This 177-nucleotide RNA was probed chemically with DMS and 2A3. The DMS profile rests on 7,280 reads. DMS adducts were read by reverse transcription with MarathonRT. For 2A3, 13,333 sequencing reads were counted.
RNA sequence: GGGAACGACUCGAGUAGAGUCGAAAAGACUGCGUGCACUGGAGACGAUAUCGAGCCGGAAAUUAAUCGAUAAUGUCUCUCGUAGUGGAUACGAUCCGGCAAGUAUCGACUACUUGUGCUCGUAGGAAUGCAUUUUAGCAUUCGUGCUAAAAUGCAUAAAAGAAACAACAACAACAAC
Reactivity to DMS in 0.01 (KOAc 150mM, MgCl2 10mM, bicine 150mM(pH8.5), 24C), signal-to-noise 3, nucleotides 027 to 126: g000a100c000u000g000c020g000u000g000c000a010c000u020g000g000a030g010a090c000g010a060u010a020u030c000g000a140g010c000c010g000g000a110a220a110u040u030a090a140u000c030g000a010u010a040a070u020g000u000c000u000c010u010c290g020u010a000g000u000g010g000a000u000a020c020g000a070u010c010c000g000g040c010a130a130g000u000a000u000c010g000a020c010u000a000c000u040u010g000u000g000c010u000c000g000u000a020g010g000a140
Reactivity to 2A3 in 0.01 (KOAc 150mM, MgCl2 10mM, bicine 150mM(pH8.5), 24C), signal-to-noise 8, nucleotides 027 to 126: g070a020c000u000g000c000g000u020g000c000a000c010u030g010g000a000g000a010c020g010a010u000a000u090c010g010a010g010c010c010g010g080a050a110a040u290u260a090a140u160c030g010a010u020a060a070u120g030u000c000u000c000u020c050g020u020a030g010u030g110g000a000u000a010c010g010a020u010c000c000g000g000c040a050a010g010u000a000u010c010g040a010c000u090a060c010u030u060g000u000g000c000u000c000g000u000a000g010g020a010